[RMDB]
Structure probing data (DMS and 2A3) for a 177-nucleotide construct. For 2A3 the reverse transcriptase was SuperScript II with manganese. DMS adducts were read by reverse transcription with MarathonRT. It was measured as part of the RMDB library OK1LIB.

RNA sequence: GGGAACGACUCGAGUAGAGUCGAAAACGGGUCAGCAAAUCUGGGUUCGUCAGGUUGGCGAUGCAUGGUGGCUGGCACAAGUGCCGGAAGUGAACUCGGCGCUGGUGUCGAUCAAUCCGCAAAACGGGUAUGAUACUGGGUUCGCCCAGUAUCAUAUAAAAGAAACAACAACAACAAC
Reactivity to DMS in 0.01 (KOAc 150mM, MgCl2 10mM, bicine 150mM(pH8.5), 24C), signal-to-noise 8, nucleotides 027 to 126: c090g010g000g000u010c030a070g010c080a040a080a060u010c050u000g000g010g010u010u010c070g000u010c020a040g000g000u010u000g010g000c060g000a060u010g010c040a050u020g010g030u010g000g000c060u010g000g000c010a010c020a040a010g010u000g000c000c000g010g000a090a120g020u040g020a110a130c150u020c000g000g000c010g020c010u000g000g020u000g010u010c010g000a060u020c090a060a060u010c010c010g010c080a070a030a090a200c060g010g000
Reactivity to 2A3 in 0.01 (KOAc 150mM, MgCl2 10mM, bicine 150mM(pH8.5), 24C), signal-to-noise 9, nucleotides 027 to 126: c030g020g020g060u050c020a020g020c050a080a070a080u050c030u060g060g030g050u100u070c030g060u060c050a040g030g100u100u100g030g020c040g020a050u100g020c070a070u110g030g010u030g050g020c080u060g010g010c010a010c010a020a010g020u020g000c000c000g030g050a130a080g140u170g230a110a080c070u030c080g000g000c000g000c010u010g000g010u010g010u000c010g010a020u050c010a020a040u030c000c010g030c070a040a060a020a040c040g040g000